[RMDB]
RNA sequence: GGGAACGACUCGAGUAGAGUCGAAAAUCGCAGGUUUGGAUCGGUUGGCGGGUCGCGAUCGUUGUCGGAAUCGGCGGUGCUCUCGGUGCGGAACAUGAAGAAGAACACCACCCAGCCGAUUGCGGCGAGUUUAUCUACGUUUCGACGUAGAUAAACUAAAAGAAACAACAACAACAAC
Reactivity to DMS in 0.01 (KOAc 150mM, MgCl2 10mM, bicine 150mM(pH8.5), 24C), signal-to-noise 6, nucleotides 027 to 126: u030c040g020c030a070g000g000u000u010u010g020g010a040u010c070g000g020u010u010g000g010c060g000g010g000u010c040g010c060g000a070u020c080g000u020u040g010u010c030g000g000a030a030u000c020g000g020c010g010g020u000g000c040u000c020u000c050g000g020u000g000c060g010g000a110a100c130a130u030g010a110a090g000a100a070g000a040a060c020a030c040c030a110c090c050c080a230g000c020c000g000a050u000u010g010c010g030g010c020g000
Reactivity to 2A3 in 0.01 (KOAc 150mM, MgCl2 10mM, bicine 150mM(pH8.5), 24C), signal-to-noise 8, nucleotides 027 to 126: u080c020g000c030a030g020g040u080u140u100g070g030a050u050c020g030g050u040u080g050g030c030g020g000g030u040c030g000c020g050a030u040c030g070u060u120g030u020c010g020g050a020a020u030c000g000g000c010g030g030u060g030c030u010c010u020c060g030g000u070g020c060g020g070a090a050c050a110u260g050a070a100g070a060a030g030a070a010c010a010c020c010a020c010c030c010a020g000c010c020g010a020u020u040g080c010g000g010c010g010